The record gives the reactivity of an RNA of 177 nucleotides to DMS and 2A3. Values are in units of 0.01, from 0 to 300, in steps of 10. For 2A3, 4,103 sequencing reads were counted. The data come from the RNA Mapping Database (RMDB), library M2PK90. The RNA was probed in 150 mM KOAc, 10 mM MgCl2 and 150 mM bicine (pH 8.5) at 24 C.
[RMDB]
RNA sequence: GGGAACGACUCGAGUAGAGUCGAAAAGUAAAUAAAGCGCACCAAUAUGGAGGUGCGCAACCAGCGUGACCUAGGAACACGCAUCCACGCGACUCCUAAGACGCGAAAGGUAUUCCAAAUAAAAAAAGAACUUAAUAACGUUCGCGUUAUUAAGUUCAAAAGAAACAACAACAACAAC
Reactivity to DMS in 0.01 (KOAc 150mM, MgCl2 10mM, bicine 150mM(pH8.5), 24C), signal-to-noise 3, nucleotides 027 to 126: g000u010a050a040a100u000a080a130a140g020c000g030c010a010c000c000a110a220u000a130u020g000g000a190g000g010u010g010c000g000c000a010a020c050c020a170g000c010g010u010g000a090c140c080u000a030g010g010a020a040c040a090c000g000c000a090u000c210c190a110c150g010c000g010a300c130u000c020c010u010a020a020g000a060c000g010c000g010a040a100a020g010g010u010a070u020u000c020c010a070a100a070u030a020a000a060a080a060a060a120
Reactivity to 2A3 in 0.01 (KOAc 150mM, MgCl2 10mM, bicine 150mM(pH8.5), 24C), signal-to-noise 4, nucleotides 027 to 126: g010u030a020a060a180u140a090a120a040g000c000g020c000a010c000c010a040a040u180a170u300g170g000a120g030g010u000g000c000g000c000a000a000c000c010a010g040c000g020u010g050a090c020c030u020a030g000g050a070a000c300a040c300g000c020a020u060c040c010a080c110g010c010g030a030c020u010c000c010u010a000a040g010a020c000g020c010g010a170a090a010g000g000u030a100u060u070c020c020a030a130a050u220a060a100a010a010a000a010a050